[RMDB]
RNA sequence: GGGAACGACUCGAGUAGAGUCGAAAAUGAAGCAAAUCCAUAAUUGCCAAUGAUGAGUAAUUCGCUAUUGCCGCCUAAAAACGGUUAGCCGGGGCUGCUAGAGCCUUGUUACCAAAGAUAGCCGGCGUUACGGCAUGAUGGUUCGCCAUCAUGCCAAGCGAACAUAAUUGUUCGCAAUUAUGUUCGCAAAAGAAACAACAACAACAAC
Reactivity to DMS in 0.01 (KOAc 150mM, MgCl2 10mM, bicine 150mM(pH8.5), 24C), signal-to-noise 2, nucleotides 027 to 156: u020g020a120a120g010c020a070a120a120u000c040c060a090u000a070a120u000u000g010c020c040a120a150u000g000a130u010g010a150g010u000a070a120u000u010c060g030c000u010a040u020u010g000c010c010g010c020c050u020a070a070a060a110a060c060g020g010u000u000a040g010c020c050g030g000g010g060c000u000g010c070u010a120g000a090g010c000c000u000u010g000u000u010a060c080c080a060a130a080g000a140u010a080g010c010c050g000g030c070g070u000u010a070c170g020g010c000a010u000g010a040u000g010g040u000u000c300g000c000c000a000u000c000a000u010g040c010c000a010a060
Reactivity to 2A3 in 0.01 (KOAc 150mM, MgCl2 10mM, bicine 150mM(pH8.5), 24C), signal-to-noise 5, nucleotides 027 to 156: u090g010a060a020g040c030a000a020a120u090c060c020a050u130a110a110u160u060g020c020c010a070a100u140g060a060u070g010a070g070u040a060a090u120u120c040g000c030u050a050u060u150g000c010c010g010c000c010u070a070a050a020a010a010c020g010g000u060u030a020g000c000c010g020g000g000g010c010u050g040c080u110a050g020a010g180c000c000u010u020g040u040u070a050c010c010a080a030a000g060a040u040a010g050c030c030g020g030c030g020u050u090a040c090g000g000c000a000u010g000a000u000g000g040u030u040c140g040c050c010a000u010c000a000u000g000c010c000a000a000